[RMDB]
RNA sequence: GGGAACGACUCGAGUAGAGUCGAAAAUAUCCUGCGUUCGCGCAGGAUACAGCACAAAACUCGGAGGGCGCCCACUCGGAGACAAAACAAAAAGCGAAGCAAGUGAGCUUAGAUUCGUCUAAGCUAAGUUUACGUUGUAAUUCGUUACAACGUAAACAAAAGAAACAACAACAACAAC
Reactivity to DMS in 0.01 (KOAc 150mM, MgCl2 10mM, bicine 150mM(pH8.5), 24C), signal-to-noise 5, nucleotides 027 to 126: u000a010u010c000c000u020g020c000g020u000u010c170g040c000g030c000a010g000g010a010u000a010c060a090g010c120a070c050a060a150a270a060c030u000c030g010g010a040g010g000g020c060g000c010c000c010a130c100u000c060g000g010a080g020a060c070a060a030a080a090c100a050a060a070a090a110g020c070g000a070a070g010c100a070a070g010u010g010a030g010c000u000u000a000g010a020u000u010c200g010u000c000u000a000a020g010c010u000a030a090
Reactivity to 2A3 in 0.01 (KOAc 150mM, MgCl2 10mM, bicine 150mM(pH8.5), 24C), signal-to-noise 5, nucleotides 027 to 126: u020a000u010c000c000u000g020c000g020u020u050c240g000c000g010c100a000g000g000a000u000a000c000a010g100c080a000c010a050a110a090a040c020u020c030g220g020a020g000g030g060c010g030c000c030c000a020c030u030c040g080g030a070g020a050c050a020a130a050a010c060a030a110a030a040a010g090c060g090a060a000g040c050a070a060g110u120g150a010g020c000u000u000a000g000a020u040u050c150g030u000c110u000a000a000g000c000u050a090a020